[RMDB]
RNA sequence: GGGAACGACUCGAGUAGAGUCGAAAAGCCAGUCAGAGGGCGCUACCAUGCAAACUAGGGCUGGCUACUCUUGCACAGAAUAACCUUUCUAUAAUAACCAGUGCAAGAAGGGUUAUUAUACCAUUUAAAAAUCGUGAAUGCUUCGGCAUUCACGAAAGUAAUAUGUUAACUUCGGUUAACAUAUUACAAAAGAAACAACAACAACAAC
Reactivity to 2A3 in 0.01 (KOAc 150mM, MgCl2 10mM, bicine 150mM(pH8.5), 24C), signal-to-noise 9, nucleotides 027 to 156: g000c000c000a000g010u010c000a000g000a010g070g020g010c010g000c020u160a300c110c090a130u300g000c010a000a020a040c000u010a010g020g000g000c000u000g000g000c000u000a000c000u000c000u000u010g010c010a010c000a020g130a160a130u090a110a080c010c010u090u260u170c110u120a030u010a010a010u000a000a000c000c000a000g000u000g000c000a000a000g000a000a000g000g000g000u000u000a000u000u000a000u010a030c030c020a120u120u210u300a070a150a030a030a050u050c000g000u000g000a000a000u000g000c010u040u040c130g060g000c000a000u000u000c000a000c000g000a000a000a000
Reactivity to DMS in 0.01 (KOAc 150mM, MgCl2 10mM, bicine 150mM(pH8.5), 24C), signal-to-noise 3, nucleotides 027 to 156: g000c000c010a020g040u010c040a130g030a090g010g000g030c300g030c080u010a120c170c140a090u020g000c020a090a300a230c030u000a170g010g030g020c000u010g030g000c010u000a040c010u000c000u000u020g000c020a040c040a160g000a110a160u000a070a090c040c020u000u010u010c050u000a050u010a030a090u000a070a020c020c010a200g020u000g000c030a050a050g000a040a030g030g000g010u000u000a020u000u000a050u010a140c140c060a180u000u000u000a050a070a070a170a100u000c000g040u010g000a040a020u000g000c010u010u000c300g030g020c020a020u000u000c000a000c000g000a000a010a070
The data come from the RNA Mapping Database (RMDB), library M2RFOK. Structure probing data (2A3 and DMS) for a 207-nucleotide construct. The DMS profile rests on 4,470 reads. The 2A3 profile rests on 13,592 reads.